RNA sequence: GGGAACGACUCGAGUAGAGUCGAAAAGAUUUCUCGAAUAUACGGGCCAAGUUAGAAUCCCCGGUAACUACCAUAGUCGGAUAUCAUCCAGCGGCUAGAGACCGCCAAUUCGAGAAAGAUAGAUCAUUUGAAAUUAUCAACGUUUUACUGGAAUUAGAUAUUCUAGGUCUUUCGAGACCUAGAAUAUAAAAGAAACAACAACAACAAC
Reactivity to DMS in 0.01 (KOAc 150mM, MgCl2 10mM, bicine 150mM(pH8.5), 24C), signal-to-noise 1, nucleotides 027 to 156: g000a150u000u000u010c010u000c010g000a050a040u000a210u010a040c020g010g000g040c000c030a070a150g030u010u000a080g000a170a170u010c000c040c070c010g010g030u010a030a110c010u000a130c020c030a130u000a050g030u000c030g000g010a210u000a060u010c110a130u000c050c030a100g030c010g010g000c030u030a150g030a210g030a040c000c040g020c010c090a080a110u000u010c000g020a030g010a050a040a070g010a130u010a120g000a120u000c080a170u000u000u020g000a060a120a090u000u010a130u000c040a060a060c050g010u000u000u000u000a050c040u000g010g000a070a070u010u000a100g000
Reactivity to 2A3 in 0.01 (KOAc 150mM, MgCl2 10mM, bicine 150mM(pH8.5), 24C), signal-to-noise 2, nucleotides 027 to 156: g050a020u050u060u030c020u010c000g000a000a010u080a020u030a070c010g000g050g000c050c050a080a020g100u110u020a050g110a130a120u080c000c000c000c010g000g000u030a010a060c020u060a050c010c070a080u020a090g030u040c020g010g000a070u050a010u100c050a040u000c010c020a010g010c050g010g000c030u020a020g030a040g030a120c030c030g000c020c040a010a020u000u000c010g000a010g010a000a010a010g010a000u120a020g130a050u150c060a090u090u080u210g060a110a110a050u120u120a110u110c060a020a070c040g040u050u040u130u130a040c030u070g030g010a030a030u130u050a100g020

The record gives the reactivity of an RNA of 207 nucleotides to DMS and 2A3. The RNA was probed in 150 mM KOAc, 10 mM MgCl2 and 150 mM bicine (pH 8.5) at 24 C. It was measured as part of the RMDB library OK3TST.